An RNA of 177 nucleotides, treated with DMS and 2A3 and read out base by base. It was measured as part of the RMDB library RFMREP. The reactions ran in a buffer of 150 mM KOAc, 10 mM MgCl2 and 150 mM bicine (pH 8.5), at 24 C. 2A3 adducts were read by reverse transcription with SuperScript II with manganese. The 2A3 profile rests on 3,070 reads.
RNA sequence: GGGAACGACUCGAGUAGAGUCGAAAAGAUAAGGGAAGUCGGCAAAACCGAUCUGUAACUUCGGGAUAAGGAUUGGCUCUAAAGGUUGGUAGAGUGGACAUUGUAGAGCCUAGAUCAGGGGGUGAGUCCAUAAGAGGUAGUUCGCUACCUCUUAUGGAAAAGAAACAACAACAACAAC
Reactivity to DMS in 0.01 (KOAc 150mM, MgCl2 10mM, bicine 150mM(pH8.5), 24C), signal-to-noise 3, nucleotides 027 to 126: g020a120u010a070a090g000g020g000a100a080g000u000c040g010g010c100a120a080a120a300c020c000g000a030u000c110u010g000u020a120a140c110u010u000c080g010g000g000a140u010a130a090g000g000a060u000u000g010g010c030u000c030u000a050a070a050g000g010u000u000g010g000u010a050g000a080g020u010g010g000a040c060a080u010u000g020u010a020g000a070g030c020c010u000a070g010a090u020c080a090g000g000g010g010g000u010g000a120g020u000
Reactivity to 2A3 in 0.01 (KOAc 150mM, MgCl2 10mM, bicine 150mM(pH8.5), 24C), signal-to-noise 3, nucleotides 027 to 126: g010a030u080a030a030g040g030g010a050a010g060u030c030g050g010c060a020a030a050a090c010c000g000a030u040c040u070g130u090a100a080c020u050u060c070g040g000g010a060u040a170a040g050g010a010u050u060g030g000c000u010c010u040a070a080a030g090g020u070u070g060g080u130a080g010a060g160u120g030g020a000c010a030u040u090g070u040a010g020a000g040c000c030u030a040g020a100u070c050a030g000g010g030g010g030u010g050a020g080u000